RNA sequence: GGGAACGACUCGAGUAGAGUCGAAAAGAUAUGGAUAGGAGGUUAUAGACAGUAGGCUACCCACCGUAUGAUCUUGUCGGAAACGACAAGAUCAUACGAGGCCUACCGAAACUGACUAUCCUAAGUCCAGAUGAUUCAGGUUCGCCUGAAUCAUCUGAAAAGAAACAACAACAACAAC
Reactivity to DMS in 0.01 (KOAc 150mM, MgCl2 10mM, bicine 150mM(pH8.5), 24C), signal-to-noise 1, nucleotides 027 to 126: g000a090u000a300u010g000g000a000u000a000g000g000a300g030g030u000u000a250u000a210g060a180c300a160g000u000a000g070g010c000u000a070c100c030c070a300c120c000g060u000a000u000g000a000u000c000u000u000g000u000c010g000g000a030a150a230c000g000a000c000a000a000g010a000u000c010a010u000a000c030g000a000g000g000c010c000u000a010c000c010g000a150a010a010c000u000g000a300c010u010a010u000c000c030u000a030a150g030u000c060
Source information:
The record gives the reactivity of an RNA of 177 nucleotides to DMS. The data come from the RNA Mapping Database (RMDB), library TTRINS. Conditions: 150 mM KOAc, 10 mM MgCl2 and 150 mM bicine (pH 8.5), 24 C. Values cover nucleotides 27 to 126.